RNA sequence: GGGAACGACUCGAGUAGAGUCGAAAACUAUGCAGAUUCGUCUGCAUAGAGACCCGAUGAAGCGGCACUUACACAGCUUCAUACAGGUAAGAAGUGCAAUAAAGGGACGAGGGUUCGCCCUCGUCAAUUCUUAAGGGCCUUUCGAGGCCCUUAAGAAAAAAGAAACAACAACAACAAC
Reactivity to DMS in 0.01 (KOAc 150mM, MgCl2 10mM, bicine 150mM(pH8.5), 24C), signal-to-noise 1, nucleotides 027 to 126: c000u020a000u000g000c010a000g030a040u000u010c210g030u020c000u020g000c020a010u000a000g030a120g010a150c000c010c010g010a030u010g010a000a020g010c030g080g040c010a030c040u010u000a120c240a140c070a140g000c000u000u000c000a070u010a210c120a150g000g000u010a020a140g020a090a040g000u010g020c030a210a100u000a030a060a090g010g010g000a030c000g010a010g000g000g000u020u010c280g000c000c000c000u010c000g000u000c000a050a020